RNA sequence: GGGAACGACUCGAGUAGAGUCGAAAACGCCGGGACUGUCCACCCGCAACACAAUCGCCGACACCUCGUCGUCGGCCGCCGUCUCACCCAAUGCCGAUGCGAUGGUGUCGCCACCGGCGCUGGACGGCGGGGCGUACGUAUUCGUACGUACGCCCCGAAAAGAAACAACAACAACAAC
Reactivity to DMS in 0.01 (KOAc 150mM, MgCl2 10mM, bicine 150mM(pH8.5), 24C), signal-to-noise 2, nucleotides 027 to 126: c120g080c110c010g010g010g020a110c090u000g000u000c020c010a150c030c020c000g000c140a100a060c080a100c220a080a080u030c090g070c070c010g000a090c010a010c060c010u000c050g000u090c060g010u000c030g010g010c020c130g010c040c040g000u010c000u020c090a130c070c010c030a050a030u000g030c000c000g000a020u010g000c030g000a020u040g030g000u000g030u010c030g020c130c110a120c070c000g000g010c000g000c200u000g000g000a050c030g020g020
Reactivity to 2A3 in 0.01 (KOAc 150mM, MgCl2 10mM, bicine 150mM(pH8.5), 24C), signal-to-noise 4, nucleotides 027 to 126: c020g020c030c000g030g040g060a050c020u050g030u020c030c000a040c020c040c010g020c080a110a110c100a010c050a120a170u200c090g040c050c020g050a000c000a000c000c020u030c050g180u080c040g010u010c010g040g010c010c000g020c000c030g130u090c020u050c080a080c010c060c000a080a060u150g000c000c000g010a010u010g000c000g010a050u300g030g000u020g000u010c000g000c000c000a050c020c000g030g000c020g020c050u010g000g010a000c000g000g010